[RMDB]
RNA sequence: GGGAACGACUCGAGUAGAGUCGAAAAAAUCACAGCUCACUGCUCAACCUCCUGGGCUCAAGCGAUCCUCCCUCCUUAGCCCCAAGUAGCUUGAACUGCAGGCGUGCGCCACCACACCUGGCUAAUAUAGUGUCAAUCGAUUCGUCGAUUGACACUAAAAAGAAACAACAACAACAAC
Reactivity to DMS in 0.01 (KOAc 150mM, MgCl2 10mM, bicine 150mM(pH8.5), 24C), signal-to-noise 1, nucleotides 027 to 126: a010a020u000c040a110c060a040g000c040u010c070a100c060u000g010c040u000c030a160a060c040c000u000c070c020u000g010g000g050c030u000c020a080a030g010c020g000a040u000c020c040u000c020c040c030u010c050c040u000u000a090g010c060c000c000c050a050a130g030u020a030g000c040u000u020g000a010a070c090u000g030c030a020g010g010c070g060u000g010c050g030c010c030a080c030c010a070c040a030c020c030u000g010g000c100u000a020a100u000a130
The data come from the RNA Mapping Database (RMDB), library OK2TST. This 177-nucleotide RNA was probed chemically with DMS. Values cover nucleotides 27 to 126. Conditions: 150 mM KOAc, 10 mM MgCl2 and 150 mM bicine (pH 8.5), 24 C.